[RMDB]
RNA sequence: GGGAACGACUCGAGUAGAGUCGAAAAGCCAGUUGUUCCGCCAGGAGCACUGCUGGUUAGCUACGUUCGGAAGGGAUAACCGCUGAAAGCAUCUAAGCGGGAAGCCUGUUCCAAGAUGAGGUUUCUCCGAUAGAGGAUGCUUCGGCAUCCUCUAUCGAAAAGAAACAACAACAACAAC
Reactivity to DMS in 0.01 (KOAc 150mM, MgCl2 10mM, bicine 150mM(pH8.5), 24C), signal-to-noise 1, nucleotides 027 to 126: g050c030c010a010g010u000u010g000u050u000c010c000g010c240c300a140g030g020a000g010c020a020c300u030g000c010u030g010g000u010u000a100g000c030u010a090c130g000u010u010c250g040g010a050a280g000g010g000a020u000a140a300c000c000g020c010u030g000a150a070a110g020c090a050u000c030u000a130a060g000c000g000g000g010a050a110g020c000c000u030g000u000u010c020c000a050a110g000a040u000g000a130g030g030u000u000u020c030u000c050